[RMDB]
RNA sequence: GGGAACGACUCGAGUAGAGUCGAAAAAAACUGUUCACAUGAACCUGCAUUGAUUACGUCCCUGCCCCUGUACACACCGCCCGUCGCUACUACGGAUUGAAUUAUUUAGUGAGGUCUCUGACGCCUUAGAGGCAUAUGUGUUCGCACAUAUGCCUCUAAAAGAAACAACAACAACAAC
Reactivity to 2A3 in 0.01 (KOAc 150mM, MgCl2 10mM, bicine 150mM(pH8.5), 24C), signal-to-noise 2, nucleotides 027 to 126: a010a000a000c130u120g040u060u010c000a040c010a030u130g040a060a070c000c000u060g080c040a020u030u100g000a010u130u170a030c010g090u050c060c030c030u030g010c000c000c000c000u020g020u110a000c070a000c040a000c020c020g000c000c000c000g000u010c020g000c000u030a040c000u010a010c010g150g000a070u000u030g110a080a140u180u040a050u000u210u060a080g000u090g030a080g010g010u000c000u000c010u120g080a100c030g000c000c000u000u000
Reactivity to DMS in 0.01 (KOAc 150mM, MgCl2 10mM, bicine 150mM(pH8.5), 24C), signal-to-noise 1, nucleotides 027 to 126: a060a030a060c040u060g040u030u010c030a060c040a080u060g010a140a000c000c000u000g010c000a060u000u000g000a050u020u000a070c130g080u000c020c030c000u000g000c120c000c000c000u050g030u010a180c120a100c060a120c090c040g000c060c010c020g000u020c000g010c050u010a000c090u020a050c150g000g010a040u000u000g000a130a130u020u070a010u000u000u010a020g000u080g000a080g000g000u000c040u060c050u020g100a160c190g070c000c000u080u000